[RMDB]
RNA sequence: GGGAACGACUCGAGUAGAGUCGAAAAUACUGUGCAUCAAGCCCACAAGACUACGACGACAUUAUUAUUCCGAGAGCAUCUUGUACUCGGUGUGCUCCGGGGGCUGUUCUAACACUUGAGUUAACCAAUAUGACGGAUGAUUCGUCAUCCGUCAUAUAAAAGAAACAACAACAACAAC
Reactivity to 2A3 in 0.01 (KOAc 150mM, MgCl2 10mM, bicine 150mM(pH8.5), 24C), signal-to-noise 3, nucleotides 027 to 126: u140a000c060u040g030u050g030c000a070u040c060a160a010g020c020c010c010a050c030a000a040g070a020c040u110a030c110g040a010c030g030a020c070a040u040u150a050u150u060a100u270u070c020c010g070a080g000a010g200c010a010u070c020u100u150g080u090a070c040u030c060g040g000u070g030u010g030c010u020c040c000g070g000g000g010g000c010u040g010u110u000c030u080a040a030c030a020c060u030u060g020a010g020u010u040a030a040c000c000a000
Reactivity to DMS in 0.01 (KOAc 150mM, MgCl2 10mM, bicine 150mM(pH8.5), 24C), signal-to-noise 5, nucleotides 027 to 126: u000a110c090u000g030u000g010c050a080u010c080a140a090g000c040c050c040a110c110a100a120g010a090c060u000a090c080g010a130c080g010a060c080a050u020u010a060u010u010a160u010u020c000c000g000a120g010a120g010c050a040u000c100u010u010g000u000a080c090u000c070g010g020u010g020u000g000c050u000c010c030g000g000g010g000g020c070u000g000u000u000c080u000a050a140c080a050c030u000u000g000a050g000u000u000a120a160c030c030a100